[RMDB]
An RNA of 177 nucleotides, treated with DMS and read out base by base.
RNA sequence: GGGAACGACUCGAGUAGAGUCGAAAAGAUAUGGAGUUCCCGAGGAACUACAAUUAAGCAUCGGAAACGAUGCCAUAUUGCCGUUUGACGGAACUCCUAAGUCAAAAUCCCCUCUUCGGAGGGGAAACUGCCCUUAUUAGUUCGCUAAUAAGGGCAGAAAAGAAACAACAACAACAAC
Reactivity to DMS in 0.01 (KOAc 150mM, MgCl2 10mM, bicine 150mM(pH8.5), 24C), signal-to-noise 3, nucleotides 027 to 126: g020a060u000a300u000g020g000a000g000u000u000c000c000c000g000a300g000g020a010a030c000u020a080c020a010a020u000u000a300a150g010c000a000u000c010g010g000a100a080a230c000g000a000u010g010c000c020a050u000a000u000u000g030c040c150g000u000u000u000g000a300c300g000g000a000a010c010u000c000c000u010a040a120g010u000c020a120a080a070a130u000c000c000c000c010u000c000u000u020c140g030g000a010g010g000g020g000a000a000a030
The DMS profile rests on 1,424 reads.